The record gives the reactivity of an RNA of 177 nucleotides to 2A3 and DMS. For 2A3 the reverse transcriptase was SuperScript II with manganese.

[RMDB]
RNA sequence: GGGAACGACUCGAGUAGAGUCGAAAAUGCCACCGUACAUUGAAAGUCGACGCCUCGGAGCAGCUUGAGCCGGGCAUUCGCCCGGUCGAACCGUCGAAGUUCGUGGAAGCCGUAAUGGCAGGAAGCGCUAUCUAGGCCCGUUCGCGGGCCUAGAUAGAAAAGAAACAACAACAACAAC
Reactivity to 2A3 in 0.01 (KOAc 150mM, MgCl2 10mM, bicine 150mM(pH8.5), 24C), signal-to-noise 2, nucleotides 027 to 126: u170g000c030c000a050c020c040g100u090a030c000a150u110u190g030a050a040a020g060u030c000g010a050c000g020c090c000u060c040g050g000a060g050c000a020g050c110u070u110g040a030g010c020c000g010g000g000c020a020u150u120c060g000c010c000c030g000g000u020c000g000a000a000c000c040g040u040c020g020a080a020g050u050u080c000g000u030g050g040a140a010g000c060c010g020u210a230a000u080g010g010c000a000g000g040a060a010g010c010g000
Reactivity to DMS in 0.01 (KOAc 150mM, MgCl2 10mM, bicine 150mM(pH8.5), 24C), signal-to-noise 1, nucleotides 027 to 126: u000g010c020c010a000c090c040g000u000a040c010a170u000u080g000a000a010a180g000u030c010g000a140c000g000c190c060u000c060g000g000a120g000c060a080g000c060u000u010g010a170g000c000c000g000g000g130c010a140u020u010c300g000c020c000c020g000g000u000c080g000a020a030c120c010g020u030c060g000a060a060g000u000u010c000g020u050g000g000a120a210g000c000c000g000u000a170a160u000g000g020c040a070g000g000a210a150g000c020g000